This 177-nucleotide RNA was probed chemically with 2A3. Conditions: 150 mM KOAc, 10 mM MgCl2 and 150 mM bicine (pH 8.5), 24 C. For 2A3, 486 sequencing reads were counted. Source: RMDB library RFM100, as collected in RNAgym.
RNA sequence: GGGAACGACUCGAGUAGAGUCGAAAAGUGGCUUCAGAUUUUGAUUUUAAUUAUGCUUGCACCUAAUUUAUUGUGUUUGCAAUGUUCUAUGAAGCCUAUAAUUGUGUUCCCCUCGCUAUCCACUACUUGCGAAUAGUGGUUUCGACCACUAUUCGCAAAAAGAAACAACAACAACAAC
Reactivity to 2A3 in 0.01 (KOAc 150mM, MgCl2 10mM, bicine 150mM(pH8.5), 24C), signal-to-noise 2, nucleotides 027 to 126: g110u060g000g000c000u000u010c010a060g010a120u130u010u030u230g160a230u090u030u230u280a000a070u060u200a050u000g000c000u000u010g000c010a000c000c050u060a200a300u080u240u300a070u110u170g020u020g000u000u000u010g000c000a000a060u280g050u070u000c000u000a110u040g000a000a000g000c000c000u000a050u000a000a040u020u020g010u040g000u060u000c000c010c000c010u000c060g060c000u160a130u110c070c000a010c020u010a010c010u000